[RMDB]
Source: RMDB library OK3TST, as collected in RNAgym. An RNA of 207 nucleotides, treated with 2A3 and DMS and read out base by base. The DMS profile rests on 8,944 reads. 2A3 adducts were read by reverse transcription with SuperScript II with manganese. The reactions ran in a buffer of 150 mM KOAc, 10 mM MgCl2 and 150 mM bicine (pH 8.5), at 24 C.
RNA sequence: GGGAACGACUCGAGUAGAGUCGAAAAUUUUGAGCCUUAUAGUAGCGUAGGAUUAGCUACUAUCGACAAUUCGUUGCUAUCCGUUAAUCUUGAACCAACCACCGACAUGGAUGAUCUUGCCUUUCAACUUGGAGAAGAUGGGUAUGAAAUAGUGGCAUGAAUGAAAUAGGUUCGCCUAUUUCAUUCAAAAAGAAACAACAACAACAAC
Reactivity to 2A3 in 0.01 (KOAc 150mM, MgCl2 10mM, bicine 150mM(pH8.5), 24C), signal-to-noise 3, nucleotides 027 to 156: u120u130u030u130g040a010g040c000c020u040u060a030u000a020g040u020a000g000c060g080u070a120g000g130a150u160u130a000g020c010u010a000c000u010a000u020c040g040a050c050a070a050u120u070c070g050u060u040g010c010u020a030u050c020c020g050u040u100a050a060u070c030u050u100g040a030a040c000c010a020a020c010c040a040c020c030g080a070c070a070u090g040g010a060u050g040a030u030c040u050u060g060c020c000u040u130u080c070a110a130c050u050u110g060g020a050g020a090a010g030a060u050g000g000g020u080a090u080g030a020a040a060u100a040g030u050g030g010c030a030
Reactivity to DMS in 0.01 (KOAc 150mM, MgCl2 10mM, bicine 150mM(pH8.5), 24C), signal-to-noise 2, nucleotides 027 to 156: u000u010u010u000g010a150g030c020c020u000u000a090u010a020g040u000a010g000c010g010u020a130g020g010a070u000u000a000g000c000u000a000c010u010a000u000c050g010a030c040a030a050u010u010c090g000u000u000g010c010u000a080u010c040c040g000u000u000a060a100u000c040u000u000g010a080a060c050c050a050a110c040c020a070c050c010g020a080c060a100u010g010g000a090u000g000a070u000c030u010u000g020c010c000u000u000u000c030a050a090c080u000u010g020g010a120g010a050a120g000a050u000g020g010g010u000a060u000g010a050a050a110u000a060g020u000g010g020c030a210